[RMDB]
RNA sequence: GGGAACGACUCGAGUAGAGUCGAAAAGCGACAAUGUUUCAAUCUUAAGUACAGACCCUAAAGAUGAGACUGUAUUCGGUAAAGUAGGAGAAGAUAAAUCAAACGUAAGCAAUAGAUACAUCAAUCCAACUACCUCUAUGUUCGCAUAGAGGUAGUUAAAAGAAACAACAACAACAAC
Reactivity to DMS in 0.01 (KOAc 150mM, MgCl2 10mM, bicine 150mM(pH8.5), 24C), signal-to-noise 6, nucleotides 027 to 126: g010c060g010a050c160a120a090u000g020u000u000u000c020a080a100u000c010u000u010a080a050g010u000a230c080a080g010a130c140c030c020u010a070a060a040g000a080u000g010a040g010a050c010u000g000u000a060u000u000c040g000g010u010a040a070a110g010u010a070g000g000a050g000a100a050g030a020u000a060a120a070u000c050a040a090a060c110g000u010a030a090g000c050a030a070u010a080g010a040u000a040c160a050u000c060a040a130u010c040c060
Reactivity to 2A3 in 0.01 (KOAc 150mM, MgCl2 10mM, bicine 150mM(pH8.5), 24C), signal-to-noise 5, nucleotides 027 to 126: g080c040g060a050c060a070a090u090g010u030u030u010c050a130a220u030c040u050u100a080a040g020u060a060c050a140g050a120c030c000c000u080a060a060a010g040a050u070g000a020g000a030c020u030g000u120a100u060u120c050g070g050u150a090a100a070g050u070a050g050g040a030g010a130a020g010a070u090a070a200a030u070c050a060a050a070c080g110u130a050a040g010c020a030a070u020a130g030a030u020a080c050a030u030c020a040a030u020c020c000